[RMDB]
RNA sequence: GGGAACGACUCGAGUAGAGUCGAAAAAUUACAGGCGUGAGCCACCCACCCCACUCUGUUGUCACCAUUUCGUGUGCAUUAUUGCUCCUCAUGAGGUUGCAGUCAGAUGUCAGCUGGGGCUGCAGUCAGCUGAAUGUUCACCUUGGCUGGACAUCCAAUAUAUAGGGUCUUUCGAGACCCUAUAUAUAAAAGAAACAACAACAACAAC
Reactivity to DMS in 0.01 (KOAc 150mM, MgCl2 10mM, bicine 150mM(pH8.5), 24C), signal-to-noise 1, nucleotides 027 to 156: a190u010u020a190c060a090g000g040c050g000u020g000a190g060c070c050a130c030c010c030a180c100c000c010c010a100c050u010c060u050g000u020u010g010u010c000a050c030c060a200u000u000u000c140g040u000g040u010g020c060a090u000u000a090u000u000g010c010u010c020c020u000c080a160u000g060a100g000g030u000u000g050c030a050g040u000c070a080g020a030u010g000u000c040a020g020c000u000g020g000g000g050c020u000g000c040a130g010u020c020a180g030c090u030g000a020a020u000g020u000u000c140a020c020c030u010u000g000g040c020u010g000g010a040c010a030u000c030c030a130